[RMDB]
An RNA of 177 nucleotides, treated with 2A3 and DMS and read out base by base. The 2A3 profile rests on 668 reads. 2A3 adducts were read by reverse transcription with SuperScript II with manganese. The data come from the RNA Mapping Database (RMDB), library OK2TRN.
RNA sequence: GGGAACGACUCGAGUAGAGUCGAAAAAGAGGCCAGAAUUUACCCUAGGGUUUGUCUCACUGUAAAAGGCCACCUGCUCCUGGACACAUGGUGGUGGCACCAGUGCCCUUCAGAACAUUAUCAAGUCUAACCGUAUAGCUUUCGAGCUAUACGGUUAAAAAGAAACAACAACAACAAC
Reactivity to 2A3 in 0.01 (KOAc 150mM, MgCl2 10mM, bicine 150mM(pH8.5), 24C), signal-to-noise 1, nucleotides 027 to 126: a000g050a000g000g050c030c000a030g030a070a050u110u020u130a030c040c020c060u080a050g020g050g080u020u010u160g000u010c010u010c040a020c040u030g000u080a000a000a110a200g040g030c060c000a000c010c000u050g060c030u070c000c020u000g120g000a040c040a020c030a140u090g020g020u080g000g000u030g010g080c020a030c000c020a000g080u030g100c040c000c000u040u010c000a030g030a080a050c020a080u150u240a180u240c030a100a040g080u050c040
Reactivity to DMS in 0.01 (KOAc 150mM, MgCl2 10mM, bicine 150mM(pH8.5), 24C), signal-to-noise 2, nucleotides 027 to 126: a110g020a090g000g020c020c050a070g020a150a090u000u000u000a080c040c020c040u000a150g020g030g010u000u010u010g000u000c030u000c030a100c070u010g010u000a020a080a060a140g000g000c010c030a060c020c030u010g020c110u000c050c030u010g020g000a100c100a060c040a060u000g020g030u010g000g020u020g010g020c030a050c070c030a040g020u010g010c010c000c010u010u010c070a030g010a070a070c110a080u000u000a080u010c090a060a090g010u000c130